[RMDB]
RNA sequence: GGGAACGACUCGAGUAGAGUCGAAAAGUCUCCCGAUUCGUCGGGAGACCGAGAAAUUCAGGUGAUUUGCUACCUUAAAGUGCAGCUAGAAAUUCAAAGGAAACACCAUGGCGUUCGCGCCAUGGAACUGCUCCUCAAUGUUCGCAUUGAGGAGCAGAAAAGAAACAACAACAACAAC
Reactivity to DMS in 0.01 (KOAc 150mM, MgCl2 10mM, bicine 150mM(pH8.5), 24C), signal-to-noise 1, nucleotides 027 to 126: g000u000c000u000c000c000c000g040a010u000u010c180g080u000c010g010g000g010a020g030a010c000c010g010a080g000a300a110a060u010u010c100a020g000g000u030g010a180u030u000u000g000c000u010a050c010c020u000u000a030a070a040g010u010g000c000a020g000c290u000a060g010a060a070a060u010u010c090a060a100a110g000g030a020a050a050c190a080c020c000a000u000g000g010c010g010u000u040c220g040c000g010c000c000a000u020g010g000a000a080
Reactivity to 2A3 in 0.01 (KOAc 150mM, MgCl2 10mM, bicine 150mM(pH8.5), 24C), signal-to-noise 1, nucleotides 027 to 126: g020u020c010u020c000c000c000g000a030u010u050c170g040u030c000g030g020g000a010g030a000c010c010g000a020g120a000a180a060u190u120c060a060g000g000u030g110a300u030u030u120g020c010u020a020c010c000u130u190a120a070a010g010u020g010c020a010g060c030u120a040g150a110a120a050u130u120c040a000a010a100g090g040a100a060a000c060a000c020c000a000u000g000g000c040g000u030u050c140g000c000g000c120c000a000u000g000g030a000a000